This 207-nucleotide RNA was probed chemically with 2A3 and DMS. For DMS, 3,515 sequencing reads were counted. DMS adducts were read by reverse transcription with MarathonRT. Values are in units of 0.01, from 0 to 300, in steps of 10. The RNA was probed in 150 mM KOAc, 10 mM MgCl2 and 150 mM bicine (pH 8.5) at 24 C. Reactivities are given for positions 27 through 156.
RNA sequence: GGGAACGACUCGAGUAGAGUCGAAAACGCUGGGUGUGCGAAACUUCCCUGCAUCGAUCUCACUGAAGCGCGCACGGUGAGGGAGCCUGGAAGUAGCACACCUGUGCUGAAGCGCGCACGGCAACCGAAAGGUGCGAAUGCAGUAUUCGUACUGCAAUACUUGUUAACUCUUCGGAGUUAACAAGUAAAAAGAAACAACAACAACAAC
Reactivity to 2A3 in 0.01 (KOAc 150mM, MgCl2 10mM, bicine 150mM(pH8.5), 24C), signal-to-noise 5, nucleotides 027 to 156: c010g000c020u030g000g000g000u000g000u010g000c020g050a160a070a090c030u080u040c010c000c010u020g000c030a300u210c060g180a150u080c000u000c000a000c000u050g020a200a070g000c000g010c000g000c010a010c020g000g000u000g000a000g010g200g010a010g000c020c060u030g000g000a070a000g000u020a020g010c000a000c000a000c010c000u000g000u020g000c010u040g020a130a030g000c000g010c000g000c000a010c010g030g000c010a040a050c010c000g060a120a040a020g000g000u020g000c010g040a100a060u090g000c010a010g010u040a040u040u140c220g050u080a020c000u000g000c000a000a030
Reactivity to DMS in 0.01 (KOAc 150mM, MgCl2 10mM, bicine 150mM(pH8.5), 24C), signal-to-noise 2, nucleotides 027 to 156: c080g000c020u020g000g020g050u000g040u000g100c000g000a140a110a090c000u000u000c000c000c110u000g000c020a170u000c130g040a080u040c010u000c010a040c010u000g020a060a030g040c020g020c000g000c020a300c010g010g040u010g000a080g030g030g010a170g030c020c110u000g050g070a030a040g010u000a170g070c020a010c000a050c020c010u000g030u000g020c010u010g010a080a050g030c000g030c000g010c000a300c000g010g000c020a110a150c000c030g010a090a200a250g010g030u000g020c000g010a090a070u000g000c030a060g000u000a050u000u000c280g020u000a030c000u000g020c040a060a240